[RMDB]
RNA sequence: GGGAACGACUCGAGUAGAGUCGAAAACACGAAUAUCAGCUAUAUCUGGGAUAUAGCCAUAUCCUGAUUUUUUUCUUUUUUUCAAGACAGUUUGCAUUGCAAUUUACCCUGAUAAAUUUAAUAUCGGCCCCUACUAUGGUUUCGACCAUAGUAGGGGAAAAGAAACAACAACAACAAC
Reactivity to 2A3 in 0.01 (KOAc 150mM, MgCl2 10mM, bicine 150mM(pH8.5), 24C), signal-to-noise 4, nucleotides 027 to 126: c080a030c070g070a070a010u140a070u140c040a040g000c010u000a010u000a000u160c040u170g210g100g020a000u000a000u010a000g030c030c000a020u040a050u130c010c030u020g110a170u010u020u010u000u010u010u110c020u050u020u020u020u000u020u060c120a090a080g070a080c030a020g040u040u070u060g030c060a130u060u070g010c010a070a100u060u090u150a130c020c000c000u040g070a030u110a090a070a160u130u250u260a110a110u100a090u060c010g030g030